[RMDB]
RNA sequence: GGGAACGACUCGAGUAGAGUCGAAAAGAUAUGGAGAUGACCCAGCUUUUGACGAAGACGGGUCGGAAACGACCUGUCUUUCGAUAAGCUGGUCAUCUCCUAAGUCAAACGCAGGUUCGCCUGCGAACAAAUCCGCUUCGUUCGCGAAGCGGAUUUGAAAAGAAACAACAACAACAAC
Reactivity to DMS in 0.01 (KOAc 150mM, MgCl2 10mM, bicine 150mM(pH8.5), 24C), signal-to-noise 2, nucleotides 027 to 126: g000a020u000a300u010g000g000a040g010a040u000g000a040c150c050c080a000g010c000u000u020u000u000g010a300c300g010a020a000g020a010c000g000g000g010u000c000g010g000a070a090a290c040g000a040c000c000u010g010u000c000u000u000u000c030g000a220u000a010a020g010c010u000g000g000u010c000a000u000c000u000c000c010u000a020a080g010u000c020a080a100a250c020g030c000a000g020g010u000u010c250g000c000c000u000g000c000g020a060a070

This 177-nucleotide RNA was probed chemically with DMS. The reactions ran in a buffer of 150 mM KOAc, 10 mM MgCl2 and 150 mM bicine (pH 8.5), at 24 C. DMS adducts were read by reverse transcription with MarathonRT.